[RMDB]
RNA sequence: GGGAACGACUCGAGUAGAGUCGAAAAGAAAGAAAGAAAGUUCAUUGUUUAUCGGAAACUUUAAACUAUAACCAUUCAAACUUUUCCAGAAGUUAGUUUGAAUAGAAAUUAACAAGAAACUUCUGAAUAACCUUAUCAUGCUUCGGCAUGAUAAGAACGAAAUUUCAUAGUUCGCUAUGAAAUUUCGAAAAGAAACAACAACAACAAC
Reactivity to 2A3 in 0.01 (KOAc 150mM, MgCl2 10mM, bicine 150mM(pH8.5), 24C), signal-to-noise 1, nucleotides 027 to 156: g010a020a010a000g030a000a050a010g040a060a030a010g010u050u030c020a060u020u110g000u030u110u130a120u170c060g040g050a030a020a030c010u030u090u070a080a020a000c000u080a030u070a250a060c050c050a040u000u000c000a000a000a000c000u040u010u000u010c070c000a020g000a020a000g010u000u010a000g000u000u000u000g030a040a000u100a050g010a010a160a040u180u140a020a050c040a030a030g020a090a000a000c000u000u000c000u010g000a010a040u030a030a000c000c000u000u000a020u000c000a000u000g000c000u060u030c150g120g000c000a000u010g000a000u000a000a000g000a000a010